Chemical mapping of a 177-nucleotide RNA with DMS.
RNA sequence: GGGAACGACUCGAGUAGAGUCGAAAAUGUAAUUGGUGAGCAAAGCCAUUUCACUGAGUUGACACCUGUUGCAUUGCAGUCUUCUAUGCACAAAAACAGUUUUGUUCCUUAAUUUCAGGAGGUUUAAUGCCAUCAUUAGGUUCGCCUAAUGAUGGCAAAAAGAAACAACAACAACAAC
Reactivity to DMS in 0.01 (KOAc 150mM, MgCl2 10mM, bicine 150mM(pH8.5), 24C), signal-to-noise 2, nucleotides 027 to 126: u010g010u030a020a020u000u010g010g010u000g000a200g010c040a010a050a080g010c050c060a090u000u000u000c170a140c150u010g010a110g000u000u000g000a090c040a010c040c000u000g000u000u000g000c000a040u010u000g000c160a150g020u010c050u000u000c000u010a090u010g000c050a080c200a060a040a070a050a050c100a050g000u010u000u010u000g010u000u000c020c020u000u000a090a070u000u010u000c090a120g010g000a050g010g010u010u010u000a050a210